This 207-nucleotide RNA was probed chemically with 2A3 and DMS. It was measured as part of the RMDB library M2RFPK. The RNA was probed in 150 mM KOAc, 10 mM MgCl2 and 150 mM bicine (pH 8.5) at 24 C. 2A3 adducts were read by reverse transcription with SuperScript II with manganese. Reactivities are given for positions 27 through 156. The DMS profile rests on 2,043 reads. The 2A3 profile rests on 4,142 reads.
RNA sequence: GGGAACGACUCGAGUAGAGUCGAAAAAAGUCACCCUCCUCGCCUCGCAAGUUCGUGCUUGCGACUUACACGUAGGGCGAGGGGUGGGCGAAAGUUGCCAUGAGACCGUAACUUUCGUAGUCAUUGAAAAACUACAAAGCCUUCGGGCUUUGUAGAAGUACACUAUCCGGUUCGCCGGAUAGUGUACAAAAGAAACAACAACAACAAC
Reactivity to 2A3 in 0.01 (KOAc 150mM, MgCl2 10mM, bicine 150mM(pH8.5), 24C), signal-to-noise 4, nucleotides 027 to 156: a000a000g130u070c040a060c020c010c000u050c010c000u000c000g000c000c000u040c010g000c000a020a010g010u190u250c130g200u300g110c030u030u040g010c000g000a000c010u050u110a040c100a030c150g160u120a080g020g060g000c000g000a000g000g000g000g000u190g010g010g010c000g000a000a000a000g000u000u000g000c020c010a040u080g060a030g030a300c040c030g000u010a000a000c000u010u000u000c020g000u000a020g080u060c080a080u030u080g030a060a080a030a020a000c000u000a000c000a000a000a010g010c000c010u040u080c200g080g000g000c000u000u000u000g000u000a000g000a000a000
Reactivity to DMS in 0.01 (KOAc 150mM, MgCl2 10mM, bicine 150mM(pH8.5), 24C), signal-to-noise 1, nucleotides 027 to 156: a010a050g020u020c070a040c010c000c000u000c020c020u000c000g050c050c000u000c010g000c040a020a020g060u000u000c120g020u000g020c100u010u000g000c000g040a050c120u000u030a160c110a140c100g030u000a100g000g010g020c000g020a020g040g010g030g000u000g010g000g020c000g000a010a010a050g000u000u000g030c040c030a300u000g010a270g040a160c140c060g000u000a040a050c040u000u000u010c020g030u000a120g000u000c120a160u000u000g010a050a090a040a140a100c000u010a000c000a000a000a010g080c000c000u000u000c260g020g130g030c000u000u000u010g020u000a000g010a040a180